[RMDB]
RNA sequence: GGGAACGACUCGAGUAGAGUCGAAAAUCGUCAGGAGGUUAAUCCUUACCUGUCCCUCCUUUCGGAGGGCAGAUAGAAAAUGAUGAUUGGAGCUUGCAUGAUCUGCUGAUUAUAGCAUUUCCGUGUAAAGUUUCAGCUAGUUCGCUAGCUGAAACUUAAAAGAAACAACAACAACAAC
Reactivity to DMS in 0.01 (KOAc 150mM, MgCl2 10mM, bicine 150mM(pH8.5), 24C), signal-to-noise 2, nucleotides 027 to 126: u000c030g030u010c010a040g000g000a050g010g000u000u030a100a170u040c010c020u000u000a090c060c010u010g000u040c000c000c000u000c000c000u020u060u010c220g010g000a010g000g000g010c000a000g010a030u010a060g010a070a060a110a090u000g020a010u000g010a040u010u000g000g010a120g000c070u000u000g000c000a060u000g000a020u000c050u000g040c050u000g010a140u010u030a080u010a020g000c010a060u000u000u000c030c040g000u010g000u000a050
Reactivity to 2A3 in 0.01 (KOAc 150mM, MgCl2 10mM, bicine 150mM(pH8.5), 24C), signal-to-noise 5, nucleotides 027 to 126: u010c000g010u010c000a000g020g030a010g050g020u210u270a120a100u200c010c000u000u000a040c000c000u140g130u300c020c000c000u010c030c000u160u300u210c160g000g020a000g000g000g000c000a000g000a020u060a010g110a000a070a020a040u080g000a000u010g000a000u000u040g050g000a020g070c030u030u000g000c030a010u030g000a010u030c010u020g000c010u020g090a220u120u210a190u220a110g000c000a010u020u010u000c080c010g040u010g000u070a080